[RMDB]
RNA sequence: GGGAACGACUCGAGUAGAGUCGAAAAGCCUGGCCAAUAUGUUGAAACCUGGUCUCUACUAAAAAAUACAAAAAUUAGCCAGGUGUUGUGGCAUGCGCCUGUAGUCCCAGCUACUCAGGAGGCUGAGCCCCAAAGUAAGUUUCGACUUACUUUGGGGAAAAGAAACAACAACAACAAC
Reactivity to 2A3 in 0.01 (KOAc 150mM, MgCl2 10mM, bicine 150mM(pH8.5), 24C), signal-to-noise 1, nucleotides 027 to 126: g010c030c020u020g050g000c010c030a120a000u160a070u230g030u050u080g030a090a030a090c010c050u000g090g080u110c040u070c000u160a250c070u170a090a130a060a000a020a090u250a140c160a080a270a030a100a090u070u030a020g050c000c000a010g070g040u000g030u030u040g050u030g000g000c040a010u070g030c090g010c030c030u000g080u130a030g000u080c000c060c010a000g020c020u040a010c020u010c110a020g060g010a040g290g000c000u000g000a020g060
Reactivity to DMS in 0.01 (KOAc 150mM, MgCl2 10mM, bicine 150mM(pH8.5), 24C), signal-to-noise 3, nucleotides 027 to 126: g040c020c020u000g050g020c010c020a050a090u010a050u010g010u010u000g000a080a170a040c050c040u000g020g010u000c090u000c120u000a130c120u010a000a040a040a090a100a080u020a100c080a030a040a050a070a070u010u000a070g000c000c010a030g000g000u000g000u000u000g010u010g000g000c010a070u000g010c210g030c030c010u000g000u000a050g000u010c020c010c010a110g020c120u010a070c050u010c050a040g000g010a170g000g000c010u000g010a110g010